[RMDB]
RNA sequence: GGGAACGACUCGAGUAGAGUCGAAAAGACGAAAGAGUACCAGAAUGUUGCCAAGCAACUCUUUCUGGCGGGUGGUUGUGAUCCUGUCAAUCCUGGAGACUUGAUAGUCGAGUUCAGAACCAAAUUUCCUUCAUUCGCGGGGGGUGGGCAGCAUGACCUUAUGGUCAUGAUUCGUCAUGACCAUAAGAAAAGAAACAACAACAACAAC
Reactivity to 2A3 in 0.01 (KOAc 150mM, MgCl2 10mM, bicine 150mM(pH8.5), 24C), signal-to-noise 2, nucleotides 027 to 156: g020a000c030g010a000a040a020g020a020g020u050a060c040c020a040g120a120a070u110g020u070u090g050c070c070a110a040g030c020a020a080c010u000c040u010u050u020c020u020g000g010c000g020g020g020u020g030g020u080u090g090u120g090a040u060c000c030u000g000u050c000a020a030u040c020c030u080g060g030a070g010a090c030u070u050g040a070u120a090g080u000c050g020a010g010u110u070c030a030g020a060a050c020c020a060a000a060u050u060u060c030c000u080u100c060a150u150u140c100g000c050g010g000g000g010g040g000u080g010g000g000c000a020g020c010a020u070g030a030c000
Reactivity to DMS in 0.01 (KOAc 150mM, MgCl2 10mM, bicine 150mM(pH8.5), 24C), signal-to-noise 2, nucleotides 027 to 156: g000a100c040g000a130a050a110g000a120g050u010a090c060c010a040g000a050a050u010g000u000u000g010c010c070a140a140g000c050a110a070c020u010c000u000u010u000c030u000g010g040c000g020g020g040u000g020g010u000u020g050u020g020a040u000c030c020u000g020u000c040a060a070u000c010c040u000g020g010a300g000a090c080u000u000g010a110u010a090g000u000c030g010a090g020u000u020c050a130g020a080a100c040c020a010a070a140u000u010u000c010c010u010u020c030a160u010u020c070g000c070g020g000g000g000g010g000u010g010g010g010c050a050g000c030a090u010g000a130c130
About this RNA: The data come from the RNA Mapping Database (RMDB), library OK3TST. Structure probing data (2A3 and DMS) for a 207-nucleotide construct. For 2A3 the reverse transcriptase was SuperScript II with manganese. Values cover nucleotides 27 to 156. For DMS, 4,092 sequencing reads were counted. DMS adducts were read by reverse transcription with MarathonRT.